[RMDB]
RNA sequence: GGGAACGACUCGAGUAGAGUCGAAAAGGAUUAGCAGGCUGGGUUUCGACAUAACGCUCUUUCACGCCCGAGUAGCAGAUCCACAUAAACAGCAGGCCAAACAGUGAAAACAGCGUGGCGGCGAAGACCAUCCGUCACGUUUCGACGUGACGGAUGGAAAAGAAACAACAACAACAAC
Reactivity to DMS in 0.01 (KOAc 150mM, MgCl2 10mM, bicine 150mM(pH8.5), 24C), signal-to-noise 1, nucleotides 027 to 126: g000g050a140u010u010a020g020c000a030g000g010c080u010g000g000g000u000u000u020c030g020a080c070a140u010a070a190c130g020c000u010c030u010u000u000c020a060c100g020c030c020c090g000a240g010u010a030g050c040a190g000a120u020c010c020a020c170a170u000a050a030a020c140a160g000c020a020g000g000c000c040a020a040a070c140a040g000u010g000a030a080a020a050c120a020g000c160g050u000g020g020c060g060g060c060g020a030a050g010a200

Record summary:
The record gives the reactivity of an RNA of 177 nucleotides to DMS. The RNA was probed in 150 mM KOAc, 10 mM MgCl2 and 150 mM bicine (pH 8.5) at 24 C. Source: RMDB library OK2TST, as collected in RNAgym.